Conditions: 150 mM KOAc, 10 mM MgCl2 and 150 mM bicine (pH 8.5), 24 C. This 177-nucleotide RNA was probed chemically with DMS. Values cover nucleotides 27 to 126.
RNA sequence: GGGAACGACUCGAGUAGAGUCGAAAAAACGGGGGCCUCGCCGCGCGCCGCCGCGCCCGACGGAGGGGCGCAGCCACGACCCUGGCGCGUGGUUGGCGGAGCGGCCGACCAACCAGCACCGCCGCACUGUAACAACUGCAUUCGUGCAGUUGUUACAAAAAGAAACAACAACAACAAC
Reactivity to DMS in 0.01 (KOAc 150mM, MgCl2 10mM, bicine 150mM(pH8.5), 24C), signal-to-noise 1, nucleotides 027 to 126: a100a040c140g000g000g030g000g040c110c020u010c180g020c020c010g000c030g020c040g050c000c000g010c040c010g050c000g000c010c000c060g000a110c180g030g010a230g000g020g010g020c000g000c020a020g040c020c080a110c080g050a300c010c010c030u010g020g010c000g000c000g040u030g000g030u000u000g030g040c020g030g000a160g060c090g010g010c000c030g000a200c040c020a050a150c020c000a140g040c050a090c060c000g000c010c050g010c170a040c130
It was measured as part of the RMDB library OK2TRN.